Annotation:
This 177-nucleotide RNA was probed chemically with 2A3 and DMS. The RNA was probed in 150 mM KOAc, 10 mM MgCl2 and 150 mM bicine (pH 8.5) at 24 C. The 2A3 profile rests on 4,378 reads. Values cover nucleotides 27 to 126. DMS adducts were read by reverse transcription with MarathonRT.
RNA sequence: GGGAACGACUCGAGUAGAGUCGAAAACAGAAUCACUUCGGUGAUUCUGAAAGAAAGAAGAAAACGCGCGACGACGAGCGCGAAAUAAAUAAAUCGACGUAAAAAUCGAGUCCUUCGGGACUCGAAAUCAGAGUAUAUUCUUCGGAAUAUACUCUGAAAAAGAAACAACAACAACAAC
Reactivity to 2A3 in 0.01 (KOAc 150mM, MgCl2 10mM, bicine 150mM(pH8.5), 24C), signal-to-noise 2, nucleotides 027 to 126: c010a000g010a000a000u000c000a000c010u050u080c150g080g000u000g010a000u000u010c000u000g000a010a020a000g070a010a050a040g100a050a030g070a020a130a030a030c000g000c000g010c000g040a060c010g030a010c010g000a000g010c010g010c000g020a030a030a010u090a000a020a020u110a010a030a010u010c020g020a040c030g040u030a060a040a010a100a060u020c000g000a000g000u000c000c000u040u050c180g060g000g000a000c010u000c010g000a000a000a000
Reactivity to DMS in 0.01 (KOAc 150mM, MgCl2 10mM, bicine 150mM(pH8.5), 24C), signal-to-noise 3, nucleotides 027 to 126: c000a020g010a040a010u000c000a000c000u000u020c170g030g030u000g000a000u000u000c000u000g000a040a050a090g010a110a080a080g020a090a140g000a080a080a120a200c010g000c000g030c000g000a100c020g000a050c020g010a040g010c010g010c000g010a000a030a040u020a030a030a030u010a060a050a060u010c000g000a140c080g010u000a070a060a080a140a090u000c000g000a000g000u010c000c000u010u000c160g020g030g010a000c000u000c010g000a010a030a060